[RMDB]
RNA sequence: GGGAACGACUCGAGUAGAGUCGAAAAGAGGCUUUGUCCGGAGCUGAAGCGUUAAAACCAAUCGGACUCGUCAGUUGUGAAGCCUGUCAGUCGGCGUCACACUGAUUAACUAAAAGACUGACUAAGCAUGUAGGACCGAGGAUGUAGGUAUUGCGGAUCUGAUUUAAAUGUUCGCAUUUAAAUCAGAAAAAGAAACAACAACAACAAC
Reactivity to DMS in 0.01 (KOAc 150mM, MgCl2 10mM, bicine 150mM(pH8.5), 24C), signal-to-noise 2, nucleotides 027 to 156: g010a280g040g010c000u000u000u010g020u000c020c010g030g010a090g030c020u010g000a120a080g020c050g000u010u010a110a090a130a140c070c040a100a120u000c020g020g020a050c020u010c150g010u000c010a020g000u000u010g040u000g000a070a040g030c000c010u000g030u000c020a020g030u000c020g030g010c010g010u000c020a020c010a030c010u000g010a040u000u000a080a100c130u010a040a030a050a070g020a040c010u000g010a040c000u000a050a110g040c070a060u000g010u000a140g000g010a090c010c030g010a120g030g020a080u000g000u000a070g010g030u000a070u010u000g000c000g010g010a180
Reactivity to 2A3 in 0.01 (KOAc 150mM, MgCl2 10mM, bicine 150mM(pH8.5), 24C), signal-to-noise 6, nucleotides 027 to 156: g150a070g030g020c020u030u080u130g000u000c010c000g010g000a000g000c030u090g060a110a030g060c060g100u120u160a040a070a030a060c020c020a010a050u080c010g000g010a000c010u000c060g030u000c000a030g000u110u150g000u110g010a010a000g000c000c000u000g000u000c000a000g000u000c000g000g010c000g000u010c000a000c000a000c000u000g000a000u030u120a050a020c030u040a000a000a010a000g000a000c000u000g000a000c000u000a020a010g020c030a030u040g060u110a050g000g090a040c050c050g020a030g080g020a030u070g040u070a030g010g030u050a080u070u130g040c030g010g010a040

Source information: Conditions: 150 mM KOAc, 10 mM MgCl2 and 150 mM bicine (pH 8.5), 24 C. Structure probing data (DMS and 2A3) for a 207-nucleotide construct. For 2A3 the reverse transcriptase was SuperScript II with manganese. Values cover nucleotides 27 to 156. DMS adducts were read by reverse transcription with MarathonRT. For DMS, 5,419 sequencing reads were counted.